Chemical mapping of a 177-nucleotide RNA with DMS. Reactivities are given for positions 27 through 126. The RNA was probed in 150 mM KOAc, 10 mM MgCl2 and 150 mM bicine (pH 8.5) at 24 C.
RNA sequence: GGGAACGACUCGAGUAGAGUCGAAAAAAAAGAUAUGGAGCAGCGGGAGCCAGUCACCACGAUGAGUUCCUUCGGAAACGAAGGAACGAGUGGUGUCUGGCGAAGAACGCUGCUCCUAAGUCAAAAAGUUUAAUAGUCGGUUCGCCGACUAUUAAACAAAAGAAACAACAACAACAAC
Reactivity to DMS in 0.01 (KOAc 150mM, MgCl2 10mM, bicine 150mM(pH8.5), 24C), signal-to-noise 1, nucleotides 027 to 126: a100a030a180a090g000a030u040a300u000g000g000a020g010c000a000g040c000g000g040g020a050g050c000c000a050g000u000c010a000c020c000a000c020g050a230u000g050a300g000u000u000c000c050u020u000c000g030g000a140a080a110c000g010a010a000g000g040a000a000c010g000a080g010u000g030g000u000g010u000c000u000g000g000c000g000a040a100g020a130a240c030g000c000u000g000c000u000c000c000u000a000a110g010u010c050a100a070a080a160a100